[RMDB]
RNA sequence: GGGAACGACUCGAGUAGAGUCGAAAAACGGAUGGUACGCCAUCCGACCAUUGGGUAGAAGCGUUCAAUCAACACCGUGACGGUGCAGAUGGGAAAUUGCCCAUGAUACGCACCAUACGUGGUGCGAAAAAGCCAUCGGUGUUCGCACCGAUGGCAACAAAUGGUACUACUUCGGUAGUACCAUUUGAAAAGAAACAACAACAACAAC
Reactivity to DMS in 0.01 (KOAc 150mM, MgCl2 10mM, bicine 150mM(pH8.5), 24C), signal-to-noise 3, nucleotides 027 to 156: a140c020g010g000a030u000g000g010u000a100c280g030c020c000a020u000c010c000g000a030c030c030a190u000u000g000g040g020u000a070g020a070a080g000c100g010u020u000c050a110a090u000c020a090a040c010a030c000c020g010u020g020a180c110g020g010u000g010c010a120g010a070u000g020g020g000a030a100a110u000u000g000c000c010c010a020u010g000a100u000a080c030g010c010a030c000c000a060u000a040c140g030u000g030g010u010g000c000g000a020a050a080a110a080g000c000c000a000u000c010g010g020u000g010u010u000c300g010c020a030c000c000g000a010u000g000g030c000a000a020
Reactivity to 2A3 in 0.01 (KOAc 150mM, MgCl2 10mM, bicine 150mM(pH8.5), 24C), signal-to-noise 5, nucleotides 027 to 156: a010c010g010g000a010u010g000g010u060a040c210g050c030c000a000u000c000c000g000a000c010c000a080u080u090g010g010g000u040a050g030a120a000g040c040g030u050u070c050a020a060u030c010a040a110c010a020c010c020g110u150g240a130c180g010g010u010g010c030a030g030a040u020g000g000g070a020a130a100u060u060g020c000c000c010a000u060g050a020u060a050c000g000c000a000c000c000a010u040a100c220g060u050g000g000u000g000c000g050a060a030a000a020a000g000c000c000a000u000c010g000g000u020g020u060u060c160g030c040a000c000c000g000a000u000g000g020c000a000a000

About this RNA: An RNA of 207 nucleotides, treated with DMS and 2A3 and read out base by base. DMS adducts were read by reverse transcription with MarathonRT. Values cover nucleotides 27 to 156. It was measured as part of the RMDB library M2RFPK. 2A3 adducts were read by reverse transcription with SuperScript II with manganese.